[RMDB]
RNA sequence: GGGAACGACUCGAGUAGAGUCGAAAAGGGGAAAGAGUAUGAGAUCCUGCUGAUUGAUGACGGCAGUAGCGAUAAUUCCGCGCAUAUGCUGGUCGAAGCCUCACAAGCGGAGAACAGCCAUAUUGUACCGCUCACCUCAGUUCGCUGAGGUGAGCGGAAAAGAAACAACAACAACAAC
Reactivity to DMS in 0.01 (KOAc 150mM, MgCl2 10mM, bicine 150mM(pH8.5), 24C), signal-to-noise 2, nucleotides 027 to 126: g000g000g000g000a160a020a110g000a090g010u000a080u000g000a140g000a060u020c050c060u010g010c040u000g020a110u000u000g000a060u060g040a100c060g000g000c010a050g000u000a080g020c110g020a060u000a060a160u020u000c040c000g050c060g020c040a020u000a000u010g000c030u000g000g010u000c000g000a300a250g010c000c000u000c300a120c300a110a180g010c000g000g000a300g000a060a040c030a000g010c020c090a020u000a030u000u000g000u000a090